Chemical mapping of a 177-nucleotide RNA with DMS. The RNA was probed in 150 mM KOAc, 10 mM MgCl2 and 150 mM bicine (pH 8.5) at 24 C. It was measured as part of the RMDB library TTRINS. DMS adducts were read by reverse transcription with MarathonRT.

RNA sequence: GGGAACGACUCGAGUAGAGUCGAAAAGAUAUGGACGGAUCGAUCUCUCGGUGUUGGGAGUCGUCACGAUCGGAAACGAUCGAAGUCGACGAAGAACAACACCGAGAGAUCGAGUCCGUCCUAAGUCGACAGGUAUAAUGUUCGCAUUAUACCUGUCAAAAGAAACAACAACAACAAC
Reactivity to DMS in 0.01 (KOAc 150mM, MgCl2 10mM, bicine 150mM(pH8.5), 24C), signal-to-noise 4, nucleotides 027 to 126: g010a120u000a270u000g000g010a040c000g050g000a300u000c000g000a020u000c000u000c000u000c000g000g000u010g000u000u000g010g010g020a220g020u000c000g040u010c000a260c020g000a010u000c010g000g000a130a100a270c010g010a020u000c010g010a150a100g040u010c070g000a010c000g020a060a110g010a170a160c000a000a000c000a020c020c020g010a000g020a010g010a000u000c000g000a000g010u000c010c000g020u000c000c000u000a010a070g000u010c150